Chemical mapping of a 177-nucleotide RNA with DMS and 2A3. The reactions ran in a buffer of 150 mM KOAc, 10 mM MgCl2 and 150 mM bicine (pH 8.5), at 24 C. High 2A3 reactivity points to a flexible backbone, as in loops and unpaired stretches. For DMS the reverse transcriptase was MarathonRT. For DMS, 13,297 sequencing reads were counted. For 2A3, 1,750 sequencing reads were counted.
RNA sequence: GGGAACGACUCGAGUAGAGUCGAAAAUCGGCUAAAAUCACAAUGUUCGUUGGGUGGAGAUUGCCGUGGCAAAGCUCGCUGCGAUGCAAGUCUCCGACACUUCUGAUGAGUCGGCGAAUGAGGAAGAAUUAUGGGGAUCAUUCGUGAUCCCCAUAAUAAAAGAAACAACAACAACAAC
Reactivity to DMS in 0.01 (KOAc 150mM, MgCl2 10mM, bicine 150mM(pH8.5), 24C), signal-to-noise 5, nucleotides 027 to 126: u020c050g000g000c020u020a050a070a090a080u000c040a080c190a140a090u030g010u010u010c130g010u000u000g010g000g040u020g000g000a020g000a070u000u000g000c010c020g010u000g000g010c010a110a120a110g030c200u030c170g000c000u010g010c000g000a140u010g010c010a020a030g010u010c000u020c010c010g010a060c080a050c030u000u010c060u000g010a100u010g000a080g020u000c020g000g010c080g000a070a060u000g000a190g010g000a040a030g020a160
Reactivity to 2A3 in 0.01 (KOAc 150mM, MgCl2 10mM, bicine 150mM(pH8.5), 24C), signal-to-noise 4, nucleotides 027 to 126: u050c010g010g010c010u130a120a050a030a080u070c030a090c070a200a060u100g070u230u190c060g030u070u060g060g080g060u170g000g000a000g000a000u020u010g000c020c000g000u010g000g000c020a060a160a170g110c060u150c250g010c000u010g020c030g040a090u140g010c000a010a000g220u030c010u020c030c000g020a000c000a000c000u070u060c050u050g080a080u030g020a000g020u030c000g000g030c030g080a040a020u120g030a070g140g080a110a150g020a150